[RMDB]
RNA sequence: GGGAACGACUCGAGUAGAGUCGAAAAGAGUAAGGCGGCCACAGCAGAAGCGUUCAUGUCGCAGCCGCUGUCACAUUCUGGUGAAUCUGCGAAUUCUGCUGCAGAGCACGGAAUAGGACCGUGCAAAACUAUGCGCUAUGUUCGCAUAGCGCAUAGUAAAAGAAACAACAACAACAAC
Reactivity to 2A3 in 0.01 (KOAc 150mM, MgCl2 10mM, bicine 150mM(pH8.5), 24C), signal-to-noise 9, nucleotides 027 to 126: g080a010g090u160a110a030g030g000c020g020g000c030c030a050c010a040g020c010a020g010a060a010g040c070g060u130u130c170a110u200g090u140c010g010c020a000g000c010c000g010c020u010g010u010c000a010c010a100u170u120c090u170g110g010u050g020a040a060u030c030u040g020c030g030a040a060u110u030c010u030g020c010u040g000c040a020g030a010g090c000a000c000g030g040a060a090u150a160g060g050a010c010c000g000u000g000c000a040a000a000
Reactivity to DMS in 0.01 (KOAc 150mM, MgCl2 10mM, bicine 150mM(pH8.5), 24C), signal-to-noise 6, nucleotides 027 to 126: g000a100g010u010a070a110g020g010c030g020g000c060c200a130c060a030g000c010a030g010a050a080g030c150g030u020u020c210a110u020g010u010c010g030c030a100g010c090c040g000c030u000g010u000c100a040c080a120u040u060c110u040g010g030u000g010a090a080u030c090u010g000c000g000a070a150u010u010c050u000g000c050u020g000c220a050g000a170g000c000a000c000g000g000a110a100u030a090g020g030a120c010c000g010u010g010c000a050a030a090